[RMDB]
Source: RMDB library OK1LIB, as collected in RNAgym. This 177-nucleotide RNA was probed chemically with DMS and 2A3. The RNA was probed in 150 mM KOAc, 10 mM MgCl2 and 150 mM bicine (pH 8.5) at 24 C.
RNA sequence: GGGAACGACUCGAGUAGAGUCGAAAAUCUGCGACAGGGCCGAAGCGUGAAACAAAAUACAUCUCGGCAAAGCUCUGCGCUUCUACAUACCAGCAGCCGAGGACAGACGCAGGUUACAAGCGCAGCAAAAUAUUAUAUUAUUCGUAAUAUAAUAUUUAAAAGAAACAACAACAACAAC
Reactivity to DMS in 0.01 (KOAc 150mM, MgCl2 10mM, bicine 150mM(pH8.5), 24C), signal-to-noise 2, nucleotides 027 to 126: u010c010u010g000c020g000a090c110a190g000g000g030c030c030g010a110a080g030c060g000u000g000a140a090a160c120a080a110a120a150u090a080c110a070u040c010u000c000g000g030c020a110a050a120g000c100u000c030u010g020c040g050c040u000u010c100u000a080c100a090u020a060c090c070a090g000c040a130g010c020c020g000a010g000g010a050c150a070g000a070c030g000c000a020g000g010u010u010a060c030a090a090g050c010g000c000a000g000c170a030
Reactivity to 2A3 in 0.01 (KOAc 150mM, MgCl2 10mM, bicine 150mM(pH8.5), 24C), signal-to-noise 1, nucleotides 027 to 126: u090c000u020g020c000g050a040c050a090g000g030g060c020c010g060a100a000g010c030g040u070g030a090a000a000c090a000a290a010a000u210a040c030a150u000c010u000c000g030g000c020a060a030a000g010c010u000c020u180g040c030g000c000u100u020c000u040a060c010a150u140a120c050c030a010g000c010a020g020c000c000g020a000g020g030a010c020a020g030a000c000g010c010a000g020g020u020u050a040c050a080a030g010c000g000c030a000g000c020a000
The DMS profile rests on 1,699 reads.